[RMDB]
RNA sequence: GGGAACGACUCGAGUAGAGUCGAAAAGCCGAUGAAUUGCCGAGAAGCCUGGCUCGAAAUCGUCGACGCAACGACGACGGUCCUGCCAUGAGACCGUAACGAGGACAUGUCGCCUCGAAUGGCGUCGUAUAACAUGAGUGGUUCGCCACUCAUGUAAACAAAUAGUGGUCUUCGGACCACUAUUUGUAAAAGAAACAACAACAACAAC
Reactivity to DMS in 0.01 (KOAc 150mM, MgCl2 10mM, bicine 150mM(pH8.5), 24C), signal-to-noise 1, nucleotides 027 to 156: g020c030c020g030a100u020g000a090a070u000u000g010c070c020g000a210g020a060a100g020c040c040u000g030g050c000u010c030g000a090a080a070u000c030g030u000c010g010a080c140g000c160a140a140c060g000a090c020g000a080c000g010g020u000c000c000u000g070c060c200a070u000g020a150g000a020c030c010g010u010a050a120c030g010a090g040g000a080c070a200u010g030u010c000g000c000c000u000c000g000a060a060u000g050g000c030g010u010c030g000u000a080u000a120a030c050a010u010g020a030g020u000g000g020u000u000c300g040c010c000a040c000u000c000a000u000g000u000a020a070
Reactivity to 2A3 in 0.01 (KOAc 150mM, MgCl2 10mM, bicine 150mM(pH8.5), 24C), signal-to-noise 2, nucleotides 027 to 156: g030c000c000g020a050u180g040a080a260u190u140g010c080c030g060a050g050a110a020g080c040c060u110g060g030c040u030c030g040a090a050a030u030c020g000u000c010g020a030c060g020c070a060a010c020g000a000c000g000a010c000g000g000u000c000c040u070g000c030c000a030u020g040a040g000a080c000c000g040u020a010a000c000g000a000g010g000a030c020a110u220g040u120c050g020c020c010u030c000g000a010a000u000g010g040c010g000u100c070g040u040a120u050a250a000c000a000u000g000a000g010u000g040g010u090u090c170g030c050c000a000c020u020c000a000u010g000u010a000a000
Source: RMDB library M2RFPK, as collected in RNAgym. Structure probing data (DMS and 2A3) for a 207-nucleotide construct. The DMS profile rests on 2,810 reads. 2A3 adducts were read by reverse transcription with SuperScript II with manganese. Conditions: 150 mM KOAc, 10 mM MgCl2 and 150 mM bicine (pH 8.5), 24 C. Reactivities are given for positions 27 through 156.